[RMDB]
RNA sequence: GGGAACGACUCGAGUAGAGUCGAAAAGAUAUGGAUCUCACCACGGGAGAACGUCGGAAACGACUGUUCAUCGAUCGUGUUGAGAUCCUAAGUCAAAGGUGUGUCGUACUUCGGUACGACACACCAAUCAUUAUCUUCCGUUCGCGGAAGAUAAUGAAAAAGAAACAACAACAACAAC
Reactivity to 2A3 in 0.01 (KOAc 150mM, MgCl2 10mM, bicine 150mM(pH8.5), 24C), signal-to-noise 5, nucleotides 027 to 126: g010a010u020a010u080g000g000a000u000c000u000c000a020c050c020a020c040g220g180g000a030g000a010a010c000g000u000c010g000g030a050a010a010c020g010a020c100u280g010u010u020c060a190u130c070g140a270u270c010g000u000g000u010u000g000a000g000a000u010c000c000u000a000a000g000u010c050a100a090a100g020g000u000g000u000g010u010c010g010u000a010c010u050u130c300g100g010u000a020c020g000a000c000a010c000a000c000c000a000a000
Reactivity to DMS in 0.01 (KOAc 150mM, MgCl2 10mM, bicine 150mM(pH8.5), 24C), signal-to-noise 4, nucleotides 027 to 126: g010a020u000a110u010g000g000a000u000c000u000c000a010c030c000a000c000g040g020g020a050g010a000a000c000g010u000c000g010g000a040a030a070c000g000a010c000u020g010u000u000c010a100u000c060g000a060u010c010g010u000g010u000u000g000a000g000a010u000c000c000u000a000a060g010u000c010a090a130a120g000g010u000g010u000g000u000c000g020u000a000c010u000u010c210g030g010u010a000c000g000a000c000a000c000a000c000c010a020a020
Chemical mapping of a 177-nucleotide RNA with 2A3 and DMS. The reactions ran in a buffer of 150 mM KOAc, 10 mM MgCl2 and 150 mM bicine (pH 8.5), at 24 C. DMS adducts were read by reverse transcription with MarathonRT. For 2A3 the reverse transcriptase was SuperScript II with manganese.